RNA sequence: GGGAACGACUCGAGUAGAGUCGAAAAAAUAAGAGUUUGGAUUAACCUAUAGGGAAUUAGCGAUCAAGAAUACUACCUAAGGACCUGGUUGACUUAAUUAUUCCAUAGGUUGGUGGAAGCUAGCGAAUUUGAUUAUCUUAUUCGUAAGAUAAUCAAAAAAAGAAACAACAACAACAAC
Reactivity to DMS in 0.01 (KOAc 150mM, MgCl2 10mM, bicine 150mM(pH8.5), 24C), signal-to-noise 5, nucleotides 027 to 126: a060a060u010a070a090g010a050g020u000u000u000g010g000a060u000u000a030a010c010c010u000a020u000a210g010g000g000a030a020u000u000a010g000c010g010a020u000c030a020a040g000a090a090u000a140c060u000a080c190c150u010a080a050g010g000a130c100c030u000g000g010u000u000g000a130c030u000u010a000a020u000u000a050u000u000c000c000a030u000a010g000g010u000u000g010g030u000g000g000a030a060g000c030u010a070g010c110g000a070a090
Reactivity to 2A3 in 0.01 (KOAc 150mM, MgCl2 10mM, bicine 150mM(pH8.5), 24C), signal-to-noise 1, nucleotides 027 to 126: a010a010u300a110a060g050a060g030u070u050u110g130g010a020u020u020a000a030c030c010u010a020u050a120g000g020g020a000a040u010u010a040g000c010g040a010u020c050a030a040g060a050a050u130a180c010u050a070c010c130u120a150a000g070g000a010c010c000u020g050g000u010u020g060a070c020u030u000a010a030u080u030a070u110u040c010c000a000u010a010g020g000u010u000g000g000u070g090g020a000a010g000c000u070a020g140c040g130a120a110
Source information
The record gives the reactivity of an RNA of 177 nucleotides to DMS and 2A3. DMS adducts were read by reverse transcription with MarathonRT. Reactivities are given for positions 27 through 126. It was measured as part of the RMDB library M2PK90. For DMS, 6,619 sequencing reads were counted.